[RMDB]
Annotation
An RNA of 207 nucleotides, treated with DMS and 2A3 and read out base by base. For 2A3, 3,784 sequencing reads were counted. It was measured as part of the RMDB library RNAMAK.
RNA sequence: GGGAACGACUCGAGUAGAGUCGAAAAACAGCAGGUUCGCCUGCUGUAAAAAACCGUAGGUUCAUGUACUGGGAGUCAUAGUAUUCGAAAGAGUACGAAUGACGACGAUCAGUACCGCUGAACCUAAACGGAAAAAAAGGGCUAUUCGUAGCCCUAAUAUUCCGAAAAUAUUCGUAUUUUCGGAAUAAAAAGAAACAACAACAACAAC
Reactivity to DMS in 0.01 (KOAc 150mM, MgCl2 10mM, bicine 150mM(pH8.5), 24C), signal-to-noise 3, nucleotides 027 to 156: a050c010a000g010c010a020g010g030u000u000c300g010c010c000u000g000c010u010g000u010a000a050a080a060a050a040c010c000g010u000a020g020g020u000u000c000a000u000g000u000a000c000u010g010g010g010a240g010u000c010a020u000a300g010u000a020u010u000c000g020a220a100a220g010a040g010u000a010c000g000a120a080u000g010a030c040g010a110c090g020a140u010c000a010g000u010a010c010c000g000c040u000g020a030a010c010c000u000a000a010a060c010g030g020a000a000a040a060a060a100a080g010g020g020c030u000a090u000u000c140g020u010a050g010c000c000c000u000a000a030
Reactivity to 2A3 in 0.01 (KOAc 150mM, MgCl2 10mM, bicine 150mM(pH8.5), 24C), signal-to-noise 2, nucleotides 027 to 156: a000c000a000g030c000a000g010g020u050u120c170g120c050c000u000g000c000u000g000u000a000a020a000a000a010a000c000c000g020u010a010g000g000u000u000c010a010u140g000u010a000c010u010g010g010g010a010g000u000c000a000u010a010g000u000a000u010u000c020g020a070a050a040g000a040g010u010a000c000g020a130a100u010g000a000c000g020a020c000g010a010u040c000a000g000u000a000c000c000g000c010u000g000a000a000c000c000u000a010a000a000c010g000g000a090a020a030a020a060a030a090g040g000g000c000u050a030u070u160c200g090u040a020g010c000c000c000u000a000a000